[RMDB]
RNA sequence: GGGAACGACUCGAGUAGAGUCGAAAAAUAUUGAAGAGCUGUACAAUAGUUUUUAUCUAUAGAAGACGGCUUGAUUCCGUGAUUAAUUAGACAUUUAACAACUUCCGGACGCACAUAUGCUCUCGUAAACAUUAACUCCAUUCGUGGAGUUAAUGUUAAAAGAAACAACAACAACAAC
Reactivity to DMS in 0.01 (KOAc 150mM, MgCl2 10mM, bicine 150mM(pH8.5), 24C), signal-to-noise 4, nucleotides 027 to 126: a090u000a050u010u010g010a180a270g000a030g020c010u000g000u000a100c070a130a050u000a030g000u000u010u010u020u010a050u040c010u000a050u000a070g000a170a140g000a060c010g010g000c100u010u000g000a150u000u000c020c010g020u010g010a100u000u000a090a110u000u000a050g010a100c120a080u010u000u010a050a050c070a060a090c140u010u000c050c050g000g010a070c160g010c070a080c110a060u000a030u000g000c080u000c030u000c060g000u000a050
Reactivity to 2A3 in 0.01 (KOAc 150mM, MgCl2 10mM, bicine 150mM(pH8.5), 24C), signal-to-noise 2, nucleotides 027 to 126: a000u110a080u030u120g030a120a070g010a010g020c000u010g010u030a030c020a040a060u000a030g010u020u020u050u300u270a160u190c020u000a030u000a070g090a170a040g070a010c000g000g000c000u030u030g060a050u060u000c000c000g010u030g030a130u110u110a090a070u060u020a030g040a060c060a110u000u160u120a070a060c030a030a090c030u100u000c050c020g030g040a020c010g000c090a010c000a040u160a030u090g020c010u000c000u020c040g070u070a000

Chemical mapping of a 177-nucleotide RNA with DMS and 2A3. The RNA was probed in 150 mM KOAc, 10 mM MgCl2 and 150 mM bicine (pH 8.5) at 24 C. Reactivities are given for positions 27 through 126. For 2A3 the reverse transcriptase was SuperScript II with manganese.